An RNA of 177 nucleotides, treated with DMS and 2A3 and read out base by base. The data come from the RNA Mapping Database (RMDB), library TTRDEL. Conditions: 150 mM KOAc, 10 mM MgCl2 and 150 mM bicine (pH 8.5), 24 C. For DMS, 3,919 sequencing reads were counted. For 2A3, 10,349 sequencing reads were counted.
[RMDB]
RNA sequence: GGGAACGACUCGAGUAGAGUCGAAAAGAUAUGGACAGCAUGAAGCGAUAGUGUCGGAAACGACAUCAUCGGGUGCUCGUCCUAAGUCAAACCUGAGCUCGAAAUGUUCGCAUUUCGAGCUCAGGAACCACUCAUAGAAGUUCGCUUCUAUGAGUGGAAAAGAAACAACAACAACAAC
Reactivity to DMS in 0.01 (KOAc 150mM, MgCl2 10mM, bicine 150mM(pH8.5), 24C), signal-to-noise 4, nucleotides 027 to 126: g010a020u010a300u000g010g000a020c020a020g020c010a020u000g010a220a160g010c020g000a000u000a040g030u010g000u000c000g010g000a130a080a240c010g010a010c000a000u000c040a010u000c010g010g010g030u000g010c000u000c270g020u010c000c000u000a020a070g000u000c020a120a120a180c010c000u000g000a010g020c000u000c000g000a010a010a010u000g000u010u020c250g010c000a010u000u000u000c010g010a020g010c000u010c000a000g000g000a030a050
Reactivity to 2A3 in 0.01 (KOAc 150mM, MgCl2 10mM, bicine 150mM(pH8.5), 24C), signal-to-noise 4, nucleotides 027 to 126: g010a020u070a030u140g000g010a000c010a000g000c010a000u110g220a300a040g260c020g010a010u020a060g030u010g000u000c000g020g020a070a080a060c020g000a000c000a010u060c010a000u010c030g230g080g000u030g010c020u070c120g010u000c000c000u020a090a030g070u020c030a090a040a050c010c010u010g010a000g000c000u000c020g030a010a000a030u060g040u200u200c300g000c180a000u000u000u010c000g010a000g000c000u000c000a000g000g000a000a000